Chemical mapping of a 177-nucleotide RNA with 2A3 and DMS. 2A3 adducts were read by reverse transcription with SuperScript II with manganese. The DMS profile rests on 5,509 reads. DMS adducts were read by reverse transcription with MarathonRT. Conditions: 150 mM KOAc, 10 mM MgCl2 and 150 mM bicine (pH 8.5), 24 C.
RNA sequence: GGGAACGACUCGAGUAGAGUCGAAAAUACAGUAAAAGAUACUAUUGAAAUGGAACGACUAUUUAAUGGAUUAAAAGAUGAAGGUGCCAUUUUAAUGCCAAAAACGAAUAUGCCACCAUACAGAGAGAACAACGUAUAAGUUCGCUUAUACGUUGUUAAAAGAAACAACAACAACAAC
Reactivity to 2A3 in 0.01 (KOAc 150mM, MgCl2 10mM, bicine 150mM(pH8.5), 24C), signal-to-noise 3, nucleotides 027 to 126: u080a000c030a000g060u130a020a030a120a100g100a080u120a100c040u040a090u090u050g020a020a040a030u020g010g010a050a060c030g060a020c070u050a100u120u080u060a070a080u110g040g020a030u120u080a040a080a060a020g080a050u130g050a040a030g120g010u040g020c010c000a020u000u010u020u040a040a010u020g050c000c020a070a100a010a010a010c040g030a050a020u130a060u140g030c010c020a020c020c000a020u050a090c050a030g100a020g000a010g020
Reactivity to DMS in 0.01 (KOAc 150mM, MgCl2 10mM, bicine 150mM(pH8.5), 24C), signal-to-noise 6, nucleotides 027 to 126: u010a090c090a100g010u010a030a030a130a130g000a180u010a050c080u000a080u000u010g000a030a050a020u000g000g010a070a050c060g020a120c070u000a070u000u000u000a060a110u010g000g000a100u000u010a030a050a060a100g000a070u000g010a070a110g010g020u000g000c030c030a030u010u000u000u020a010a060u000g010c070c070a030a040a060a070a040c170g000a040a060u000a050u000g010c060c030a070c050c040a050u000a070c100a070g010a140g000a130g000